The record gives the reactivity of an RNA of 177 nucleotides to DMS. For DMS the reverse transcriptase was MarathonRT.
RNA sequence: GGGAACGACUCGAGUAGAGUCGAAAACGAAGCGAGGAGGAAAGCAAAGAAAGCAACGGGGCUAGUCGGCAGGUGUUCCGCCCCCCGAGAGGGGAAGAGUGAGGCUUAUCCCGGGGAACUCGGCGUACGGUGGAUAUUAGUUCGCUAAUAUCCACCGAAAAGAAACAACAACAACAAC
Reactivity to DMS in 0.01 (KOAc 150mM, MgCl2 10mM, bicine 150mM(pH8.5), 24C), signal-to-noise 1, nucleotides 027 to 126: c070g050a120a140g020c060g030a050g030g000a050g020g000a080a040a190g010c050a080a150a090g000a100a060a080g000c060a110a150c090g000g020g010g010c040u010a050g010u000c030g030g050c040a080g010g010u000g000u000u000c080c000g020c090c050c010c030c000c030g000a080g000a090g030g000g000g000a070a040g000a050g000u020g030a060g020g020c050u000u000a070u000c010c010c020g010g010g010g000a120a090c090u010c030g000g020c060g040u000a120